[RMDB]
RNA sequence: GGGAACGACUCGAGUAGAGUCGAAAACAGCAUCGGACCGGAGGCCCAGCAGGCUGCGGAUACCCUCCACGAAGCGGGACCACAGUCCCGGCCCACCGUCGCUGUAGCGCAGGCGGUUCAGGGUCCUCUGGAAUCGGGUAUCCGUCAGGCCCCAGGCUGAACGAUCUACAUUCGUGUAGAUCGUUCAAAAAGAAACAACAACAACAAC
Reactivity to 2A3 in 0.01 (KOAc 150mM, MgCl2 10mM, bicine 150mM(pH8.5), 24C), signal-to-noise 1, nucleotides 027 to 156: c090a040g060c020a100u130c060g030g050a030c030c030g060g040a060g020g020c000c000c010a000g070c110a060g050g000c000u020g000c000g000g000a000u010a000c000c000c000u020c000c000a040c140g060a020a040g140c060g000g010g000a000c000c040a100c190a300g000u000c010c000c000g000g020c000c000c000a040c000c000g000u050c020g040c090u120g110u300a060g030c080g000c140a180g000g000c010g000g010u110u200c100a140g010g000g010u010c000c060u010c000u000g000g080a040a030u210c110g050g000g000u000a000u000c010c000g000u050c020a000g010g000c000c000c010c010a030g000g000c010